[RMDB]
RNA sequence: GGGAACGACUCGAGUAGAGUCGAAAACAGCAGGAUGUCCAUGAUACGUUUCGAGUAUCCCUGCCAGAACGACCGGCCGACGAGCCACCGGAACUCGCCUCUGUAGUCGAAGAGUUUGUGAUGGACCUGGCUGCUUUUAUUUCGAUAAAAGCAGCCAAAAAGAAACAACAACAACAAC
Reactivity to DMS in 0.01 (KOAc 150mM, MgCl2 10mM, bicine 150mM(pH8.5), 24C), signal-to-noise 1, nucleotides 027 to 126: c210a140g040c030a020g050g000a130u030g000u000c050c030a080u000g000a010u000a010c090g000u000u010u010c110g040a140g050u000a050u000c010c010c000u000g020c050c070a170g020a240a100c080g000a120c100c000g010g030c050c070g000a090c110g010a070g010c040c000a050c060c080g000g000a150a150c050u000c000g000c090c020u010c060u000g030u010a100g020u010c050g030a040a070g030a130g010u000u000u000g010u020g010a050u000g010g000a040c060c300

Conditions: 150 mM KOAc, 10 mM MgCl2 and 150 mM bicine (pH 8.5), 24 C.
An RNA of 177 nucleotides, treated with DMS and read out base by base.
High DMS reactivity at an A or C suggests that its Watson-Crick edge is free.